[RMDB]
RNA sequence: GGGAACGACUCGAGUAGAGUCGAAAAGUUUCUUAACUACACAACAAUCACAGAGGCUACGUCAGAUACUUUAGGAGGAUUCUUACCAAACCUGAAUUUGCCCAUAUAAAGUAAGAACCUAGUUCUCUCAUAGGAUAGAUUUCGAUCUAUCCUAUGAAAAAGAAACAACAACAACAAC
Reactivity to 2A3 in 0.01 (KOAc 150mM, MgCl2 10mM, bicine 150mM(pH8.5), 24C), signal-to-noise 6, nucleotides 027 to 126: g000u030u060u000c010u060u090a100a090c040u170a050c070a000c010a100a090c020a070a130u130c040a050c000a110g080a030g080g000c010u050a020c040g040u010c020a010g030a200u050a100c010u040u050u110a080g040g040a020g060g010a140u120u030c010u030u040a050c020c040a070a070a030c010c020u020g020a050a050u060u090u130g040c020c010c030a050u120a030u030a130a070a010g020u020a010a010g000a020a020c010c010u020a030g030u060u050c010u000c000
Reactivity to DMS in 0.01 (KOAc 150mM, MgCl2 10mM, bicine 150mM(pH8.5), 24C), signal-to-noise 8, nucleotides 027 to 126: g010u000u000u010c030u000u000a090a120c070u010a100c110a080c080a080a070c120a090a070u000c080a080c110a080g010a120g010g010c040u000a040c130g010u000c060a050g010a130u000a030c040u000u000u010a060g010g010a150g010g010a080u000u000c010u000u000a050c040c040a030a070a100c080c080u010g020a060a160u000u000u010g010c030c020c030a080u010a100u010a050a070a110g000u010a030a040g000a050a040c040c020u000a110g010u000u000c010u000c020

An RNA of 177 nucleotides, treated with 2A3 and DMS and read out base by base. Reactivities are given for positions 27 through 126. It was measured as part of the RMDB library OK2TST. The reactions ran in a buffer of 150 mM KOAc, 10 mM MgCl2 and 150 mM bicine (pH 8.5), at 24 C. For DMS the reverse transcriptase was MarathonRT.